[RMDB]
RNA sequence: GGGAACGACUCGAGUAGAGUCGAAAAGAUAUGGAAACAGCUUUUGACGAGCUCAGCUCGGAAACGAGCUGAAGCUCGAUAAGCUGUACUUCCUAAGUCAAAACCGACGAUCUUCGGAUCGUCGGAAGCUUACACGUAAGUUCGCUUACGUGUAAGCAAAAGAAACAACAACAACAAC
Reactivity to 2A3 in 0.01 (KOAc 150mM, MgCl2 10mM, bicine 150mM(pH8.5), 24C), signal-to-noise 3, nucleotides 027 to 126: g020a010u050a010u080g010g000a030a020a020c000a000g000c020u080u090u230u300g300a300c220g000a000g000c000u010c000a010g000c000u010c000g010g010a010a020a020c000g000a000g000c010u000g000a000a000g000c000u000c010g010a010u000a000a000g000c000u000g020u010a030c000u010u000c010c000u010a070a020g030u020c030a010a030a160a220c030c000g000a000c000g000a010u000c010u040u100c300g150g000a000u000c000g000u010c000g000g000a000a010
Reactivity to DMS in 0.01 (KOAc 150mM, MgCl2 10mM, bicine 150mM(pH8.5), 24C), signal-to-noise 3, nucleotides 027 to 126: g010a030u000a200u010g000g000a000a040a070c010a000g020c000u000u000u010u030g030a190c100g000a010g020c000u000c010a040g000c000u010c010g020g010a030a040a140c010g010a010g020c010u000g000a030a050g020c000u000c000g020a030u010a010a020g000c000u020g000u010a050c260u000u000c000c000u000a030a130g000u000c020a090a040a090a200c000c000g000a020c000g010a000u000c000u000u000c250g010g000a010u000c000g000u000c010g000g000a000a020

The record gives the reactivity of an RNA of 177 nucleotides to 2A3 and DMS. DMS adducts were read by reverse transcription with MarathonRT. The reactions ran in a buffer of 150 mM KOAc, 10 mM MgCl2 and 150 mM bicine (pH 8.5), at 24 C. It was measured as part of the RMDB library TTRDEL.